[RMDB]
RNA sequence: GGGAACGACUCGAGUAGAGUCGAAAAGAUAUGGACGUCGUACUACGCGAAGAACAGAAUCGGAAACGAUUCUGGGAGCGUUGUACGAGCGUCCUAAGUCAAAGCUAAGGGGUUCGCCCCUUAGCAACGCUAUGAGUACGUUCGCGUACUCAUAGCGAAAAGAAACAACAACAACAAC
Reactivity to 2A3 in 0.01 (KOAc 150mM, MgCl2 10mM, bicine 150mM(pH8.5), 24C), signal-to-noise 1, nucleotides 027 to 126: g030a020u090a070u180g000g010a010c010g020u040c000g000u010a010c000u050a010c070g070c020g300a300a090g010a080a010c000a000g000a000a020u010c000g060g030a070a080a050c000g020a000u000u000c010u000g000g000g020a020g000c010g000u020u000g010u000a020c000g030a000g020c010g030u000c000c000u010a060a000g000u000c050a060a190a000g000c000u000a020a010g060g020g040g020u080u160c220g210c000c000c000c000u000u000a000g010c000a000a000
Reactivity to DMS in 0.01 (KOAc 150mM, MgCl2 10mM, bicine 150mM(pH8.5), 24C), signal-to-noise 2, nucleotides 027 to 126: g010a080u000a300u030g000g010a000c010g020u020c000g010u000a000c000u010a000c030g030c010g020a110a210g010a180a140c030a000g010a010a000u000c000g000g000a140a150a200c030g000a000u000u000c000u000g000g000g000a090g000c010g030u020u000g000u000a000c010g020a020g010c000g000u000c000c000u000a000a040g000u000c040a190a130a160g000c010u000a000a000g010g000g010g000u000u000c300g010c030c000c000c000u000u000a000g030c020a020a060

The record gives the reactivity of an RNA of 177 nucleotides to 2A3 and DMS. Reactivities are given for positions 27 through 126. For 2A3 the reverse transcriptase was SuperScript II with manganese. It was measured as part of the RMDB library TTRDES. For DMS, 1,871 sequencing reads were counted.